[RMDB]
RNA sequence: GGGAACGACUCGAGUAGAGUCGAAAAGGGGUUUGGGUGUAGACCUGGUGGACUGGAAAAUUACCCAUUUGCCCCCAGAUUAAUGAUUAACGGGUCCCUGCCCUCACCCUGUCUGGGAGAGGAGCCCAGGGCCAGGCUAGGCCAACGGGAGCCCGAAAGUAUAAAUAGCAUUCGUGCUAUUUAUACUAAAAGAAACAACAACAACAAC
Reactivity to 2A3 in 0.01 (KOAc 150mM, MgCl2 10mM, bicine 150mM(pH8.5), 24C), signal-to-noise 1, nucleotides 027 to 156: g060g020g010g010u030u020u010g080g000g000u070g050u050a110g080a190c000c010u040g060g080u100g190g100a170c120u100g030g020a000a030a100a080u050u010a060c030c000c000a040u150u090u230g030c010c000c000c050c010a040g010a080u040u180a060a080u100g100a050u000u180a140a000c000g000g000g000u000c020c000c000u000g000c030c000c000u030c020a060c010c000c040u030g130u120c120u130g000g010g010a080g000a040g000g040a050g060c000c000c000a030g030g000g020c010c000a000g030g000c020u020a030g000g000c010c000a000a020c060g010g030g000a040g160c050c000c010g010a050a050
Reactivity to DMS in 0.01 (KOAc 150mM, MgCl2 10mM, bicine 150mM(pH8.5), 24C), signal-to-noise 1, nucleotides 027 to 156: g000g000g130g070u000u000u020g000g030g000u000g010u000a100g010a280c010c020u020g000g060u010g000g010a300c090u010g020g000a070a080a130a150u000u000a060c010c020c040a130u010u010u000g000c010c000c010c000c020a090g000a200u000u010a050a120u010g030a170u000u010a110a120c030g000g080g010u000c000c020c010u000g030c090c000c000u000c020a040c040c000c030u010g020u000c120u010g050g000g020a170g010a080g020g030a090g010c030c010c010a040g000g020g040c020c030a000g000g010c050u000a050g010g040c020c090a050a100c050g020g010g020a050g030c020c010c040g020a030a060